[RMDB]
RNA sequence: GGGAACGACUCGAGUAGAGUCGAAAAGGUAAAAUUACGCAGCAGUUUUUUUCCUUGUGGGAAACGGUAUGAGGGAGCAUGUAUGACCAUUUUUACCAUAAGCACUAGUGACUAGUUAGUGCGGAACUCAAGUAGGGAGUUUCGACUCCCUACUUGAAAAAGAAACAACAACAACAAC
Reactivity to 2A3 in 0.01 (KOAc 150mM, MgCl2 10mM, bicine 150mM(pH8.5), 24C), signal-to-noise 6, nucleotides 027 to 126: g050g010u040a020a040a040a050u120u080a040c080g010c050a090g000c020a060g050u010u010u000u000u000u050u140c020c000u100u080g060u100g060g000g030a080a070a020c060g050g030u130a070u130g020a070g030g030g020a020g050c050a050u090g020u110a140u100g040a030c040c000a060u030u070u030u050u050a030c020c020a010u030a100a060g000c000a000c010u010a000g010u030g170a200c070u050a080g080u120u010a000g000u020g000c020g010g020a030a010c020
Reactivity to DMS in 0.01 (KOAc 150mM, MgCl2 10mM, bicine 150mM(pH8.5), 24C), signal-to-noise 4, nucleotides 027 to 126: g000g000u020a020a030a040a010u010u040a050c080g000c140a100g070c090a060g020u000u000u020u010u040u010u010c010c000u010u020g030u020g000g000g020a070a030a070c140g010g010u020a030u000g000a110g020g000g010a070g020c100a070u010g010u020a040u030g000a100c060c050a070u010u000u000u000u000a090c020c000a080u010a110a160g000c020a010c020u000a000g000u010g010a090c180u040a130g010u000u010a020g030u000g000c000g000g000a090a090c130
Chemical mapping of a 177-nucleotide RNA with 2A3 and DMS.
For 2A3, 5,171 sequencing reads were counted.
The reactions ran in a buffer of 150 mM KOAc, 10 mM MgCl2 and 150 mM bicine (pH 8.5), at 24 C.
It was measured as part of the RMDB library OK1LIB.